Conditions: 150 mM KOAc, 10 mM MgCl2 and 150 mM bicine (pH 8.5), 24 C. Chemical mapping of a 177-nucleotide RNA with DMS.
RNA sequence: GGGAACGACUCGAGUAGAGUCGAAAAGAUAUGGAGGCUCCGUGAACUACUCUUCGUCGGAAACGAUUCGGAGCACGGAGGCCUCCUAAGUCAAAGAACUCCCCAUACUUCGGUAUGGGGAGUUCAACACUUAUCCUGAGUUCGCUCAGGAUAAGUGAAAAGAAACAACAACAACAAC
Reactivity to DMS in 0.01 (KOAc 150mM, MgCl2 10mM, bicine 150mM(pH8.5), 24C), signal-to-noise 3, nucleotides 027 to 126: g010a040u000a300u000g000g000a020g000g000c000u000c000c000g020u010g010a090a040c040u010a290c020u000c010u010u000c150g000u000c010g000g000a120a100a190c010g010a010u000u010c170g000g010a010g010c010a010c010g000g010a040g010g020c000c000u000c000c000u000a010a100g000u000c050a070a140a110g010a010a010c000u000c010c000c010c000a000u000a000c000u000u010c250g010g020u000a000u000g000g000g000g000a000g000u000u000c000a060a170